An RNA of 207 nucleotides, treated with 2A3 and DMS and read out base by base. The RNA was probed in 150 mM KOAc, 10 mM MgCl2 and 150 mM bicine (pH 8.5) at 24 C. Source: RMDB library OK3TST, as collected in RNAgym. The DMS profile rests on 2,103 reads.
RNA sequence: GGGAACGACUCGAGUAGAGUCGAAAAUAAACAUAACGUAUGUCAAACCUACGACACCUACAAAAUGUACAGAAACUACCACAUAUAUAACUACACAUACAGCACCUACGUUACAUUCAACCGAGCCAGCGCCGAUAGCAUCCAACGCAAGUUUUGGGCAGACUAUAGAUUUCGAUCUAUAGUCUGCAAAAGAAACAACAACAACAAC
Reactivity to 2A3 in 0.01 (KOAc 150mM, MgCl2 10mM, bicine 150mM(pH8.5), 24C), signal-to-noise 5, nucleotides 027 to 156: u080a020a060a010c050a070u150a110a030c050g030u060a050u120g010u060c030a060a140a200c030c030u080a040c040g040a020c020a040c030c030u090a100c070a030a160a040a080u080g030u050a060c020a060g100a050a110a020c040u070a060c040c000a040c050a070u130a010u050a020u020a170a070c070u100a050c060a000c010a100u140a060c020a030g010c010a030c040c010u070a050c050g030u050u070a060c040a030u050u090c020a040a070c050c020g000a010g000c010c000a020g000c040g020c030c020g030a030u030a030g000c010a020u020c020c020a000a040c030g030c120a100a050g010u040u010u040u030g050g040
Reactivity to DMS in 0.01 (KOAc 150mM, MgCl2 10mM, bicine 150mM(pH8.5), 24C), signal-to-noise 2, nucleotides 027 to 156: u010a080a070a110c040a090u020a020a110c060g030u000a100u000g010u000c050a090a170a190c070c080u000a080c030g020a110c050a050c070c020u000a270c030a070a050a180a070u000g020u020a140c010a070g000a070a040a090c050u020a080c040c000a090c050a000u000a080u030a080u010a040a090c030u010a130c080a060c040a090u010a060c030a110g000c060a030c010c020u000a080c110g020u000u000a090c060a090u000u000c000a070a060c010c030g030a080g000c010c050a050g000c000g010c010c040g040a100u000a060g000c040a270u000c040c030a030a030c010g030c040a040a080g030u000u010u000u000g010g010